[RMDB]
RNA sequence: GGGAACGACUCGAGUAGAGUCGAAAACGGACAGUUACGGGGACAUCAUCGCCCCGGGCGCAUUCCUGGACACGAUCGAGGAAUGGAAGGCUUCCGGGAACAACCUCCCGGCCCUCUUCGGGCACCGCUUCGACGACCCGGAUUACUACGUCGGCGGUACCAGCUAAUAGUUCGCUAUUAGCUGGUAAAAAGAAACAACAACAACAAC
Reactivity to 2A3 in 0.01 (KOAc 150mM, MgCl2 10mM, bicine 150mM(pH8.5), 24C), signal-to-noise 2, nucleotides 027 to 156: c030g020g070a010c010a130g010u040u300a180c070g000g000g000g010a020c040a180u190c050a120u210c220g040c000c010c000c010g000g010g000c020g030c010a030u000u020c000c000u020g100g060a030c050a020c240g150a260u020c040g070a010g000g000a020a020u030g000g040a130a040g060g000c030u090u030c020c000g000g030g000a030a060c020a020a040c040c000u000c000c000c000g050g000c000c000c000u100c060u140u130c090g000g000g000c020a010c010c000g030c010u250u230c100g000a010c000g010a020c000c000c000g030g000a050u120u100a120c120u050a000c020g000u010c000g010g000c010g030g000
Reactivity to DMS in 0.01 (KOAc 150mM, MgCl2 10mM, bicine 150mM(pH8.5), 24C), signal-to-noise 1, nucleotides 027 to 156: c030g000g010a090c060a160g030u000u000a050c030g020g040g000g020a180c090a110u030c150a020u000c270g010c000c010c020c010g010g010g010c050g040c020a180u000u000c010c000u000g020g010a110c030a100c280g000a200u010c040g030a090g000g020a100a040u000g030g010a070a050g010g030c010u000u000c020c000g040g000g030a080a130c120a100a080c040c010u000c000c010c000g010g000c090c020c010u000c110u000u000c110g000g000g000c000a060c000c020g010c000u000u000c020g010a060c000g000a140c040c000c020g000g000a160u010u010a100c090u020a040c040g010u000c020g010g030c000g000g040

Source information: An RNA of 207 nucleotides, treated with 2A3 and DMS and read out base by base. The DMS profile rests on 2,345 reads. For 2A3 the reverse transcriptase was SuperScript II with manganese. Source: RMDB library OK3TST, as collected in RNAgym. Conditions: 150 mM KOAc, 10 mM MgCl2 and 150 mM bicine (pH 8.5), 24 C.